[RMDB]
RNA sequence: GGGAACGACUCGAGUAGAGUCGAAAAGAGUACAUAUGCCCAGCCUUACUGUUUCGGCUGGAUGCUUCGUGCAAAUGCUAUGUACGCCUACGUAUAUGUGCGUAGAUGCCUAUAUUUUCUCUCCUGAGAAAAUAUAGAUGCAUACAAAGGGGAUGCAUGCUAAAUUAAAUUUCGAUUUAAUUUAGCAAAAAGAAACAACAACAACAAC
Reactivity to DMS in 0.01 (KOAc 150mM, MgCl2 10mM, bicine 150mM(pH8.5), 24C), signal-to-noise 4, nucleotides 027 to 156: g000a090g010u010a040c020a020u000a030u010g030c020c010c000a020g010c010c010u000u010a090c120u010g010u000u000u000c170g020g020c000u000g010g020a120u000g020c010u010u000c230g010u000g060c030a060a090a180u000g020c030u000a040u000g000u000a020c030g010c040c010u000a020c010g030u000a070u000a090u010g020u010g030c030g020u000a030g010a080u000g010c010c010u000a010u000a000u000u000u000u000c000u000c010u000c290c260u010g010a020g010a010a010a020a000u000a000u000a000g000a110u010g020c000a030u000a120c070a060a110a080g000g020g000g010a250u010g020c050a190
Reactivity to 2A3 in 0.01 (KOAc 150mM, MgCl2 10mM, bicine 150mM(pH8.5), 24C), signal-to-noise 6, nucleotides 027 to 156: g060a020g000u010a000c000a010u030a030u280g010c000c000c000a010g000c000c010u150u170a150c120u140g070u090u070u080c020g000g000c000u010g020g010a020u080g000c010u070u200c190g150u170g020c010a060a050a140u190g000c010u020a010u020g000u000a000c000g020c000c000u010a020c010g040u040a070u030a070u260g180u080g070c010g000u010a020g010a100u050g000c000c010u000a010u000a000u010u000u000u000c000u000c010u050c040c210u170g000a000g000a000a000a000a000u000a000u000a000g000a020u100g000c000a000u030a090c040a020a150a030g010g020g000g000a020u080g040c040a010